RNA sequence: GGGAACGACUCGAGUAGAGUCGAAAAGAUAUGGAGUUGUGGACAUGCGAAGGGUGUCGGAAACGACACGCUUCGCAACAGCCACACCUCCUAAGUCAAAACCGAGAAAGGUUCGCCUUUCUCGGAAGAUACGUGUUGGGUUCGCCCAACACGUAUCAAAAGAAACAACAACAACAAC
Reactivity to 2A3 in 0.01 (KOAc 150mM, MgCl2 10mM, bicine 150mM(pH8.5), 24C), signal-to-noise 2, nucleotides 027 to 126: g030a030u040a030u120g010g010a010g010u010u000g000u000g020g000a060c070a170u140g000c000g000a010a000g170g040g000u010g010u000c000g000g030a060a070a060c000g030a000c000a000c010g100c000u000u000c010g000c010a000a010c020a000g010c010c010a000c010a000c010c000u000c010c000u020a140a030g040u010c010a030a020a120a190c000c000g000a000g010a000a010a010g050g050u130u190c290g150c030c000u010u000u000c000u000c000g010g000a000a030
Reactivity to DMS in 0.01 (KOAc 150mM, MgCl2 10mM, bicine 150mM(pH8.5), 24C), signal-to-noise 2, nucleotides 027 to 126: g000a040u000a300u000g010g000a030g010u000u000g000u000g010g000a040c100a270u000g030c000g000a020a020g000g000g040u000g010u000c000g000g000a060a070a140c020g000a010c000a010c000g010c000u000u000c010g010c020a000a010c190a130g020c010c000a010c000a000c040c010u000c000c000u000a030a100g010u000c030a130a060a180a200c010c000g030a010g000a000a000a010g010g010u000u010c240g000c000c000u010u000u000c000u000c010g000g000a010a030